Structure probing data (2A3) for a 177-nucleotide construct. High 2A3 reactivity points to a flexible backbone, as in loops and unpaired stretches. For 2A3 the reverse transcriptase was SuperScript II with manganese. The data come from the RNA Mapping Database (RMDB), library OK1LIB.
RNA sequence: GGGAACGACUCGAGUAGAGUCGAAAAUUCGGUCACGGCUUGUCCUAUACCAGUUUCGAGUAUCGUGACCUGGUGGUGACGGGCGGCCACACCGUGCACGCCAGUUUCAGCGUUACCAACACGGGCGGACUUGGUGCCAAUUCGUUGGCACCAAGUCAAAAGAAACAACAACAACAAC
Reactivity to 2A3 in 0.01 (KOAc 150mM, MgCl2 10mM, bicine 150mM(pH8.5), 24C), signal-to-noise 2, nucleotides 027 to 126: u080u060c030g010g000u020c020a020c050g000g010c000u000u100g070u050c020c030u070a070u060a190c090c030a020g000u020u030u080c050g010a020g010u070a130u250c020g020u050g010a020c000c000u040g030g000u050g040g010u050g020a040c030g020g020g030c010g090g000c000c010a010c000a000c020c000g010u020g060c040a020c050g040c030c000a020g000u040u060u020c040a000g000c000g000u040u070a130c020c000a010a060c090a040c200g060g000g020c000g050